Structure probing data (DMS and 2A3) for a 177-nucleotide construct. The DMS profile rests on 4,487 reads. For 2A3, 6,312 sequencing reads were counted. High 2A3 reactivity points to a flexible backbone, as in loops and unpaired stretches. In probing experiments dimethyl sulfate is read out at A N1 and C N3, which are open when not base-paired. DMS adducts were read by reverse transcription with MarathonRT. Conditions: 150 mM KOAc, 10 mM MgCl2 and 150 mM bicine (pH 8.5), 24 C. 2A3 adducts were read by reverse transcription with SuperScript II with manganese.
[RMDB]
RNA sequence: GGGAACGACUCGAGUAGAGUCGAAAAGCAGGAAACACAAGCGCCGCUGCACAACCCAGUAUCGCAGUACUCAGGCGAGCAAACUUCAACUUCAUUUCAAACUCCGUCAAACGUUGAAUCGACUCGGAUCUAACCAAUUCUUCGGAAUUGGUUAGAUAAAAGAAACAACAACAACAAC
Reactivity to DMS in 0.01 (KOAc 150mM, MgCl2 10mM, bicine 150mM(pH8.5), 24C), signal-to-noise 3, nucleotides 027 to 126: g000c010a050g010g000a050a150a110c070a080c110a140a170g010c080g020c040c030g010c020u000g020c050a080c140a100a090c050c010c000a100g030u020a070u000c030g000c030a030g020u030a110c110u020c050a090g000g000c090g010a030g010c110a030a060a100c050u010u020c040a060a030c040u000u050c050a050u010u010u010c080a070a120a170c110u010c010c020g010u030c020a040a050a090c150g010u020u000g000a030a150u000c080g010a060c020u030c100g000g000
Reactivity to 2A3 in 0.01 (KOAc 150mM, MgCl2 10mM, bicine 150mM(pH8.5), 24C), signal-to-noise 7, nucleotides 027 to 126: g040c050a020g000g080a100a110a030c050a020c050a110a130g020c000g000c010c000g000c020u030g000c020a030c040a090a110c020c010c000a010g040u080a070u120c060g000c040a020g040u060a060c060u070c080a020g080g000c020g050a030g030c040a020a090a030c020u070u040c020a030a030c020u090u070c060a120u050u060u090c050a070a090a060c020u010c030c020g110u090c070a060a080a080c050g020u040u060g050a030a080u080c040g030a040c030u000c020g040g020